[RMDB]
RNA sequence: GGGAACGACUCGAGUAGAGUCGAAAACGGAGUCCUACUGCGACCAGGACGAACCGGACGCGGACUACCCGUACUACCCCGGGGAGGCUCGAGGCGGGCCGCGCGGGGUCGACUCUCGGCGCGCGGCGGGGUGUAUGCAAUUCGUUGCAUACACCCCAAAAGAAACAACAACAACAAC
Reactivity to DMS in 0.01 (KOAc 150mM, MgCl2 10mM, bicine 150mM(pH8.5), 24C), signal-to-noise 3, nucleotides 027 to 126: c020g000g000a190g000u000c010c020u020a160c190u000g040c030g030a070c050c080a070g000g000a090c110g030a110a090c040c020g020g010a110c110g010c030g010g000a070c040u000a140c110c000c000g010u000a110c130u000a060c050c090c020c020g000g000g000g000a300g010g000c000u010c030g020a110g000g020c030g020g010g000c020c020g020c190g010c040g010g000g010g020u010c080g010a090c040u020c050u000c070g010g020c000g010c010g000c040g010g000c150
Reactivity to 2A3 in 0.01 (KOAc 150mM, MgCl2 10mM, bicine 150mM(pH8.5), 24C), signal-to-noise 5, nucleotides 027 to 126: c010g050g030a030g000u020c010c020u080a120c060u190g050c030g080a090c040c040a080g010g030a030c090g040a090a070c020c010g020g000a040c090g020c010g300g010a030c030u100a130c040c000c000g010u020a050c040u080a030c000c020c010c000g040g010g040g000a110g100g000c010u020c030g050a060g030g130c070g010g080g000c000c000g000c010g010c010g000g010g000g000u010c020g040a060c000u020c010u030c120g080g020c000g010c000g000c010g020g000c030

Structure probing data (DMS and 2A3) for a 177-nucleotide construct. Source: RMDB library OK1LIB, as collected in RNAgym. For 2A3, 4,386 sequencing reads were counted. Reactivities are given for positions 27 through 126.